Source: RMDB library TTRDES, as collected in RNAgym.
Structure probing data (DMS and 2A3) for a 177-nucleotide construct.
For 2A3, 3,460 sequencing reads were counted.
[RMDB]
RNA sequence: GGGAACGACUCGAGUAGAGUCGAAAAGAUAUGGAGCGAAGUCAGCGAUGAGCUGUGGUUCGGAAACGAACCCAGCGAGCUGUCGCGCUCCUAAGUCAAAAGUCGUAUUAUGUUCGCAUAAUACGACCUCUCGGUAAGGGUUCGCCCUUACCGAGAGAAAAGAAACAACAACAACAAC
Reactivity to DMS in 0.01 (KOAc 150mM, MgCl2 10mM, bicine 150mM(pH8.5), 24C), signal-to-noise 1, nucleotides 027 to 126: g000a010u000a010u020g020g000a020g000c010g000a060a170g000u000c040a000g050c000g040a190u020g000a040g040c000u000g010u020g040g010u000u000c010g010g010a000a010a010c000g000a000a000c010c000c010a010g010c000g000a010g010c010u000g000u010c090g000c020g000c000u000c010c000u000a000a060g010u000c010a130a130a120a140g000u000c000g010u000a000u000u000a000u000g020u010u010c300g050c010a010u000a000a000u000a000c010g010a010c000
Reactivity to 2A3 in 0.01 (KOAc 150mM, MgCl2 10mM, bicine 150mM(pH8.5), 24C), signal-to-noise 2, nucleotides 027 to 126: g000a010u010a000u060g010g000a000g000c000g060a300a120g130u050c000a000g000c050g200a300u300g000a040g000c010u000g070u300g050g000u010u020c000g000g030a010a010a000c010g010a000a000c000c010c000a000g000c000g010a040g000c000u010g000u020c000g050c010g000c030u000c000c010u000a010a010g020u010c020a160a100a030a000g010u000c000g010u000a000u010u010a000u020g040u020u060c300g030c190a010u010a030a010u000a000c020g000a000c020